[RMDB]
This 177-nucleotide RNA was probed chemically with 2A3 and DMS. For 2A3, 1,426 sequencing reads were counted. For DMS, 1,168 sequencing reads were counted. For DMS the reverse transcriptase was MarathonRT. It was measured as part of the RMDB library OK2TST.

RNA sequence: GGGAACGACUCGAGUAGAGUCGAAAACGCUGGCGGCCUUCGGUGCGCAGCGAGCCGAGGCCGGCAUCGAUCUCGUCGGCGACUUCGAGCAAGCGGGCCGCCCAUUCGGCGACGACGAUGCCGGCAGCAUCGUCUUCCGCUUCGGCGGAAGACGAUGAAAAGAAACAACAACAACAAC
Reactivity to 2A3 in 0.01 (KOAc 150mM, MgCl2 10mM, bicine 150mM(pH8.5), 24C), signal-to-noise 2, nucleotides 027 to 126: c000g000c000u020g150g060c010g000g000c000c000u240u120c240g010g000u060g020c020g000c030a000g000c010g000a000g010c030c020g050a100g110g100c000c000g010g010c000a030u010c000g110a220u010c040u000c050g070u020c040g010g100c030g010a060c070u250u130c120g090a140g060c090a130a080g120c000g010g010g060c050c020g000c010c000c000a110u110u110c010g040g020c010g000a020c070g020a010c010g000a010u000g000c000c020g020g020c030a000g010
Reactivity to DMS in 0.01 (KOAc 150mM, MgCl2 10mM, bicine 150mM(pH8.5), 24C), signal-to-noise 1, nucleotides 027 to 126: c040g000c020u010g020g010c000g030g000c000c010u000u000c200g010g020u000g000c000g000c020a070g010c010g000a230g000c030c020g000a110g000g010c010c000g030g020c000a000u010c010g010a160u000c080u000c010g020u000c000g050g000c050g000a020c200u000u000c080g010a100g020c280a080a120g000c050g000g000g010c050c000g010c010c050c120a070u000u000c110g000g010c010g010a040c140g000a070c030g000a010u010g000c000c000g030g010c050a020g040